RNA sequence: GGGAACGACUCGAGUAGAGUCGAAAAGGGAGGUAGGCGGGACGAGCACCUAGGACUGCAAGCAAAUCUCUUGGGUGGCAGGUCCCCCUGUGUGCUGUAGCAGAACUACAACCUCUCCCGCCGUUAGCCGAUAAUAUAGGUUCGCCUAUAUUAUCGGAAAAGAAACAACAACAACAAC
Reactivity to 2A3 in 0.01 (KOAc 150mM, MgCl2 10mM, bicine 150mM(pH8.5), 24C), signal-to-noise 9, nucleotides 027 to 126: g070g020g010a060g020g060u160a050g010g030c060g000g000g010a030c110g020a030g010c020a020c020c010u000a010g010g020a020c020u030g000c040a060a080g020c010a030a160a230u090c050u030c000u140u060g020g000g010u200g060g000c070a070g040g190u300c010c000c000c000c000u010g020u010g000u030g020c030u020g020u060a040g000c030a010g010a070a010c000u010a010c020a040a040c010c000u000c000u000c000c000c020g010c000c000g020u030u040a010g000
Reactivity to DMS in 0.01 (KOAc 150mM, MgCl2 10mM, bicine 150mM(pH8.5), 24C), signal-to-noise 9, nucleotides 027 to 126: g010g010g010a070g010g020u000a110g010g020c030g010g000g000a020c170g010a080g000c040a080c230c230u000a020g010g010a190c030u010g010c040a120a070g010c050a040a090a140u010c070u000c060u010u000g010g010g030u010g020g010c040a100g010g000u010c010c010c010c010c010u000g000u000g010u000g010c090u000g010u000a090g010c020a060g000a030a290c010u000a010c090a040a220c300c010u000c010u000c000c000c000g010c010c010g000u010u010a080g000
Background: An RNA of 177 nucleotides, treated with 2A3 and DMS and read out base by base. For 2A3 the reverse transcriptase was SuperScript II with manganese. For DMS the reverse transcriptase was MarathonRT. Conditions: 150 mM KOAc, 10 mM MgCl2 and 150 mM bicine (pH 8.5), 24 C.